[RMDB]
RNA sequence: GGGAACGACUCGAGUAGAGUCGAAAAUGUCAUUUCAAAUUUACGGAACCGCAAGAAACGAUUUGCUUCUUCCUCUAACUGAGUAAUUUCUUCUUCUGUUAACUCUUCCGUAGUAAUGUGAAUAUGUUAUUAAUUCAGAUUUCGAUCUGAAUUAAUAAAAAGAAACAACAACAACAAC
Reactivity to DMS in 0.01 (KOAc 150mM, MgCl2 10mM, bicine 150mM(pH8.5), 24C), signal-to-noise 9, nucleotides 027 to 126: u010g000u020c040a060u000u010u010c030a050a100a100u010u010u010a020c030g000g000a040a070c120c050g010c110a070a060g010a040a070a060c110g010a080u010u010u020g020c020u000u000c040u000u010c050c040u000c070u010a050a080c110u010g000a080g000u020a050a060u010u000u000c040u000u000c050u000u000c030u000g000u010u010a060a140c080u010c060u000u000c010c010g010u000a030g010u010a040a060u010g000u010g010a050a060u010a050u010g000u000
Reactivity to 2A3 in 0.01 (KOAc 150mM, MgCl2 10mM, bicine 150mM(pH8.5), 24C), signal-to-noise 9, nucleotides 027 to 126: u140g040u030c020a040u010u050u060c060a070a080a070u100u090u040a030c020g020g020a030a050c040c020g020c100a040a040g040a080a090a020c080g040a050u020u020u080g020c010u040u040c000u050u020c020c040u030c030u060a080a090c050u050g030a010g050u070a060a110u060u040u020c010u040u000c000u030u000c010u020g050u090u080a080a080c020u020c010u070u010c020c030g020u020a040g040u060a060a120u090g030u020g080a050a040u130a070u220g060u040
Background
The record gives the reactivity of an RNA of 177 nucleotides to DMS and 2A3. Conditions: 150 mM KOAc, 10 mM MgCl2 and 150 mM bicine (pH 8.5), 24 C. Source: RMDB libraries RFM100 and RFMREP, as collected in RNAgym. DMS adducts were read by reverse transcription with MarathonRT.